[RMDB]
This 207-nucleotide RNA was probed chemically with 2A3 and DMS.
2A3 adducts were read by reverse transcription with SuperScript II with manganese.
RNA sequence: GGGAACGACUCGAGUAGAGUCGAAAAGAUUAAGUGGGAGCGUCGCCCUUUCGGUGCAUCGGAUAUUAAUUAGCCAGUGCGUGGCAUUACGCAUAUUGAUGUCUACUUUGGCGUAGACUCUGCCAAUUUAAGGAUUGAUGGGCAAUCCAGCCCUAGACGAGGAGUAGUAGUUCGCUACUACUCCUCGAAAAGAAACAACAACAACAAC
Reactivity to 2A3 in 0.01 (KOAc 150mM, MgCl2 10mM, bicine 150mM(pH8.5), 24C), signal-to-noise 3, nucleotides 027 to 156: g040a030u080u200a080a060g060u090g020g040g050a020g010c010g020u010c010g010c020c020c000u100u080u020c080g040g000u040g010c030a040u050c030g060g010a030u060a020u080u110a210a080u100u180a030g040c010c040a030g020u010g030c020g020u010g050g010c080a040u060u130a020c020g000c010a010u050a050u060u120g060a030u090g010u010c050u010a040c050u140u080u100g050g000c070g020u030a060g020a020c000u010c000u040g040c000c020a050a070u030u040u050a100a040g050g010a040u030u050g030a070u220g030g000g000c000a000a050u050c060c010a020g020c000c020c030u010a010g020a030
Reactivity to DMS in 0.01 (KOAc 150mM, MgCl2 10mM, bicine 150mM(pH8.5), 24C), signal-to-noise 1, nucleotides 027 to 156: g010a130u010u000a110a130g020u000g010g020g020a140g020c070g020u000c040g050c010c010c020u000u000u020c000g010g070u010g020c010a090u000c010g050g000a040u000a060u030u000a070a180u000u000a140g030c020c050a110g020u000g030c010g060u010g020g060c080a080u000u000a030c030g010c060a070u000a060u020u000g000a090u000g010u000c000u000a030c050u000u000u000g020g000c090g040u000a150g020a040c020u020c000u020g010c010c020a030a070u010u000u000a060a120g020g010a150u000u000g010a150u000g000g000g000c030a040a130u020c050c070a210g000c010c000c000u000a200g010a110
Source: RMDB library OK3TST, as collected in RNAgym.